The record gives the reactivity of an RNA of 177 nucleotides to DMS and 2A3. Values cover nucleotides 27 to 126. Conditions: 150 mM KOAc, 10 mM MgCl2 and 150 mM bicine (pH 8.5), 24 C. For 2A3 the reverse transcriptase was SuperScript II with manganese. For DMS the reverse transcriptase was MarathonRT.
RNA sequence: GGGAACGACUCGAGUAGAGUCGAAAAGAUAUGGACAUGGGAGUCCUAAGACCGUUGAAAUCGGAAACGAUGGAGGUCUAGGACCAAUCCAUGUCCUAAGUCAAAUCGACCGGUUCGCCGGUCGAAAGAUGUUAAAGAUGUUCGCAUCUUUAACAUCAAAAGAAACAACAACAACAAC
Reactivity to DMS in 0.01 (KOAc 150mM, MgCl2 10mM, bicine 150mM(pH8.5), 24C), signal-to-noise 7, nucleotides 027 to 126: g010a050u000a300u000g000g010a010c000a010u000g000g010g000a120g010u000c000c000u000a040a080g010a010c000c000g010u000u020g010a100a130a020u000c010g010g000a130a090a170c010g000a010u000g000g010a090g010g010u000c010u000a020g000g000a010c000c070a100a090u010c000c010a010u000g000u010c000c000u000a010a070g000u000c040a080a110a160u000c010g000a020c000c000g010g000u000u010c210g020c000c000g000g000u000c000g000a010a030a070
Reactivity to 2A3 in 0.01 (KOAc 150mM, MgCl2 10mM, bicine 150mM(pH8.5), 24C), signal-to-noise 5, nucleotides 027 to 126: g020a010u070a030u140g000g000a000c000a010u000g010g020g020a050g020u000c000c010u020a120a070g010a000c000c000g120u220u050g030a020a020a000u010c010g020g040a100a030a020c020g000a010u010g010g040a020g000g000u000c000u000a000g000g000a010c000c030a060a030u040c000c000a000u010g000u000c000c000u000a020a000g010u000c020a020a010a160u030c000g000a000c020c000g000g030u040u030c170g030c070c010g020g010u000c000g000a000a000a010